Record summary: This 177-nucleotide RNA was probed chemically with DMS and 2A3. The reactions ran in a buffer of 150 mM KOAc, 10 mM MgCl2 and 150 mM bicine (pH 8.5), at 24 C. As a SHAPE reagent, 2A3 marks flexible, mostly unpaired nucleotides at the ribose 2'-OH. For 2A3, 916 sequencing reads were counted.
RNA sequence: GGGAACGACUCGAGUAGAGUCGAAAAAAUGCAAUGACACCUGGGUCCACGGUGUCACAUCUUUUGAGGGAAAGUCCUCCUGGAAGAGUUGGGAAUGGACAAGUCAGACUAUGCUGAUGGGCACAAAGAAGACUAUUUCCUUCGGGAAAUAGUCUUCAAAAGAAACAACAACAACAAC
Reactivity to DMS in 0.01 (KOAc 150mM, MgCl2 10mM, bicine 150mM(pH8.5), 24C), signal-to-noise 1, nucleotides 027 to 126: a040a020u010g020c110a070a130u020g010a000c000a010c010c000u020g010g000g000u000c040c010a200c260g010g000u020g010u000c030a020c090a030u000c030u000u000u020u000g010a140g000g000g020a130a140a100g020u000c040c050u000c000c090u040g000g010a050a050g010a110g010u010u010g010g010g020a120a060u000g000g000a050c030a110a070g010u000c030a030g020a110c190u000a060u030g010c020u000g010a050u000g030g000g000c080a120c160a060a130a170
Reactivity to 2A3 in 0.01 (KOAc 150mM, MgCl2 10mM, bicine 150mM(pH8.5), 24C), signal-to-noise 1, nucleotides 027 to 126: a000a000u140g000c110a040a060u050g000a000c000a010c000c000u030g060g060g000u000c010c030a020c020g000g030u020g000u020c010a000c010a030u080c030u000u120u070u100g110a110g070g010g100a100a110a000g050u030c000c000u000c000c000u110g070g020a070a050g040a200g110u230u270g000g000g030a040a170u100g010g010a010c000a030a030g040u030c010a010g020a120c020u080a070u270g060c000u030g030a060u100g040g030g000c030a060c050a070a080a050